[RMDB]
RNA sequence: GGGAACGACUCGAGUAGAGUCGAAAAGUCACGUGGUACGCCACGUGACAACCGGAAACGGACAUGACGAUCGCGCGCAUGUCGGGAAACCGUAAACGCGAAAGCGAGGAGUUACGACUCCUCGCAAGCCUAUAUGCUAGUUCGCUAGCAUAUAGGCAAAAGAAACAACAACAACAAC
Reactivity to DMS in 0.01 (KOAc 150mM, MgCl2 10mM, bicine 150mM(pH8.5), 24C), signal-to-noise 4, nucleotides 027 to 126: g000u000c000a000c010g030u000g000g020u010a110c300g040c020c000a000c000g010u010g030a020c000a020a090c030c000g020g000a080a100a080c030g000g000a030c020a010u000g010a130c000g000a060u000c010g000c000g000c030g000c010a000u000g000u000c020g040g000g000a100a110a150c300c010g000u010a050a070a110c000g010c000g000a030a160a130g020c000g010a000g020g000a010g010u000u010a080c190g000a120c000u000c000c030u000c000g000c010a010a040
Reactivity to 2A3 in 0.01 (KOAc 150mM, MgCl2 10mM, bicine 150mM(pH8.5), 24C), signal-to-noise 9, nucleotides 027 to 126: g000u000c010a000c000g010u000g010g010u060a050c260g080c030c000a010c000g000u000g000a000c000a000a000c000c010g090g070a150a170a010c060g060g000a000c000a010u040g080a140c000g030a050u020c000g000c000g000c000g000c000a000u000g010u030c020g010g040g030a090a040a010c030c010g050u160a050a130a070c010g000c010g020a040a020a000g000c000g000a000g000g000a000g000u020u050a070c200g050a020c090u000c000c000u010c000g000c000a000a000